The record gives the reactivity of an RNA of 177 nucleotides to DMS. The data come from the RNA Mapping Database (RMDB), library TTRINS. For DMS the reverse transcriptase was MarathonRT.
[RMDB]
RNA sequence: GGGAACGACUCGAGUAGAGUCGAAAAGAUAUGGAGGCUGUGAGGCCUAUGAACUACGGAAUCAAUUGGGUUAUGUCGGAAACGACAUAACCCAAUUGAGUCCGCAUAGGCUCAGCCUCCUAAGUCACACAAAGACAGAGUUCGCUCUGUCUUUGUGAAAAGAAACAACAACAACAAC
Reactivity to DMS in 0.01 (KOAc 150mM, MgCl2 10mM, bicine 150mM(pH8.5), 24C), signal-to-noise 1, nucleotides 027 to 126: g010a050u000a300u020g000g030a010g000g000c000u010g010u040g010a060g020g010c000c000u000a000u020g000a150a130c150u020a300c030g020g000a000a020u000c000a000a000u010u000g040g040g000u000u000a000u000g000u000c000g000g000a110a180a180c000g000a020c000a010u000a000a000c000c000c010a000a000u000u000g000a030g000u000c000c000g000c010a000u000a000g040g000c000u000c000a060g000c010c000u000c000c010u000a000a010g000u000c040a300
Values cover nucleotides 27 to 126.